[RMDB]
RNA sequence: GGGAACGACUCGAGUAGAGUCGAAAAAUGAACGUGGUGGGCGUAAGUUAGUAGAAGUUCUAAUGGUACGCGGUGGGUUUUCGACUGUACUCGAAACCACCACCACCACCAAGUCGUUCCCACCGAACAUAAGUGCUGGAUUCGUCCAGCACUUAUGAAAAGAAACAACAACAACAAC
Reactivity to 2A3 in 0.01 (KOAc 150mM, MgCl2 10mM, bicine 150mM(pH8.5), 24C), signal-to-noise 1, nucleotides 027 to 126: a000u230g020a070a010c040g020u000g010g010u000g000g000g000c010g020u010a030a010g010u010u000a020g010u030a030g110a300a070g120u090u010c000u000a010a020u040g240g020u050a000c010g000c050g000g040u020g000g030g000u000u020u030u100c000g000a010c050u100g020u170a020c020u000c010g000a020a000a000c000c010a000c000c030a030c000c010a000c020c000a010c000c000a020a000g000u000c010g020u020u000c020c020c000a000c010c000g030a100a110
Reactivity to DMS in 0.01 (KOAc 150mM, MgCl2 10mM, bicine 150mM(pH8.5), 24C), signal-to-noise 2, nucleotides 027 to 126: a060u010g000a030a040c090g040u000g030g030u000g000g000g000c040g020u000a090a300g020u000u000a030g000u000a070g020a170a220g000u000u000c010u010a010a020u000g010g060u000a010c020g010c040g050g050u010g000g000g010u010u000u000u000c000g000a020c050u010g000u000a030c110u020c000g000a050a020a070c020c000a020c010c020a150c130c070a050c030c010a000c010c100a070a070g020u010c000g000u000u000c000c010c000a070c100c120g000a070a170
The data come from the RNA Mapping Database (RMDB), library M2PK90.
Structure probing data (2A3 and DMS) for a 177-nucleotide construct.
The reactions ran in a buffer of 150 mM KOAc, 10 mM MgCl2 and 150 mM bicine (pH 8.5), at 24 C.